[RMDB]
RNA sequence: GGGAACGACUCGAGUAGAGUCGAAAAGAAGUGGCAGGGACAUGCCCCACAAGCUCGUUCUAGCAACAUAUGUUUGGCUAGUUCGAGCGAUUAGUCUUGAGGAGCGUCCUCUCGCCUCUUGACGAGAGGGUUGGAGCAGGUUCGCCUGUUCCAACCCAAAAGAAACAACAACAACAAC
Reactivity to DMS in 0.01 (KOAc 150mM, MgCl2 10mM, bicine 150mM(pH8.5), 24C), signal-to-noise 3, nucleotides 027 to 126: g000a050a030g010u020g000g000c040a070g030g000g000a090c090a090u040g000c030c030c010c040a040c090a100a140g000c000u000c010g010u020u000c000u000a000g010c000a010a040c030a200u060a130u030g000u020u020u010g000g020c010u000a000g000u010u010c000g000a020g000c000g010a020u020u040a110g020u010c140u000u020g000a060g000g010a080g010c080g000u010c010c010u010c030u010c070g020c000c010u020c000u000u000g010a120c030g010a090g000a220
Reactivity to 2A3 in 0.01 (KOAc 150mM, MgCl2 10mM, bicine 150mM(pH8.5), 24C), signal-to-noise 7, nucleotides 027 to 126: g140a040a010g030u060g030g000c050a040g050g010g040a070c050a060u210g030c000c000c000c000a050c020a020a030g000c000u000c000g000u000u000c000u000a000g000c000a010a060c010a100u280a070u300g130u110u070u110g140g020c000u000a000g000u000u000c000g000a000g000c000g000a000u010u080a020g050u020c040u070u090g020a110g020g020a150g020c030g030u030c000c010u040c000u010c070g010c020c000u010c010u020u050g050a060c080g010a020g070a050